[RMDB]
RNA sequence: GGGAACGACUCGAGUAGAGUCGAAAAGAUAUGGACAUACUUGUCCCUGGAGCGUUGAAAUCGGAAACGAUGGAGCUCCCUGGACGGGUAUGUCCUAAGUCAAAAUCCAAUGCUUCGGCAUUGGAAACGAUGCAAUAGUGUUCGCACUAUUGCAUCGAAAAGAAACAACAACAACAAC
Reactivity to 2A3 in 0.01 (KOAc 150mM, MgCl2 10mM, bicine 150mM(pH8.5), 24C), signal-to-noise 2, nucleotides 027 to 126: g020a000u070a080u180g000g010a000c000a000u010a000c010u000u020g000u030c000c030c020u000g000g010a010g000c010g180u300u050g040a040a030a000u000c020g040g050a080a070a080c010g000a020u000g040g010a000g000c000u000c000c000c010u000g000g000a000c020g000g000g000u030a000u000g000u000c000c000u000a000a000g000u000c000a010a020a010a190u000c010c000a000a000u000g000c010u070u100c300g140g000c010a000u000u000g000g000a020a020a010
Reactivity to DMS in 0.01 (KOAc 150mM, MgCl2 10mM, bicine 150mM(pH8.5), 24C), signal-to-noise 3, nucleotides 027 to 126: g010a020u000a300u000g000g010a010c010a000u000a000c010u000u000g000u000c000c000c020u010g010g010a000g030c010g020u000u050g000a100a100a030u000c010g000g000a140a100a170c010g000a010u000g000g000a100g010c000u000c000c000c020u010g000g010a000c010g000g000g000u000a000u000g000u000c000c000u000a000a070g000u010c040a090a110a090a170u000c010c000a000a000u000g000c000u000u030c200g030g020c000a010u000u010g010g000a010a020a070
Annotation:
Structure probing data (2A3 and DMS) for a 177-nucleotide construct. The RNA was probed in 150 mM KOAc, 10 mM MgCl2 and 150 mM bicine (pH 8.5) at 24 C. For DMS the reverse transcriptase was MarathonRT.